[RMDB]
RNA sequence: GGGAACGACUCGAGUAGAGUCGAAAACGAGAUGAGUUCGCUCAUCUCGAAAGAACCGCGGGCGUGAGUCGGUCAGAGCAUGACAGGCGCUGCGGUCACGAAAAAGUGGUGUGUUCGCACACCACAAUCAGUCAAUACAGUUCGCUGUAUUGACUGAAAAAGAAACAACAACAACAAC
Reactivity to DMS in 0.01 (KOAc 150mM, MgCl2 10mM, bicine 150mM(pH8.5), 24C), signal-to-noise 6, nucleotides 027 to 126: c020g000a020g010a000u010g000a020g010u000u010c230g020c010u000c000a000u000c010u000c000g000a030a070a100g000a130a040c000c000g010c010g010g010g010c010g030u010g000a300g000u000c030g010g010u000c120a100g010a180g010c130a090u010g020a010c010a060g000g000c010g020c010u000g010c010g000g010u000c040a040c140g000a070a070a050a110a110g010u000g000g000u000g010u000g010u000u020c250g010c010a010c000a010c000c000a000c010a020a050
Reactivity to 2A3 in 0.01 (KOAc 150mM, MgCl2 10mM, bicine 150mM(pH8.5), 24C), signal-to-noise 6, nucleotides 027 to 126: c010g000a010g000a010u010g000a000g040u060u120c170g080c070u000c000a000u000c000u000c000g000a000a010a010g030a050a010c010c010g000c040g060g040g010c030g010u050g050a090g050u070c060g050g010u080c100a060g040a050g280c120a120u120g010a010c010a030g140g000c000g010c020u010g000c000g000g010u020c020a060c080g140a130a050a020a020a010g000u000g000g000u000g000u000g000u020u070c170g020c070a000c000a000c000c000a000c000a000a010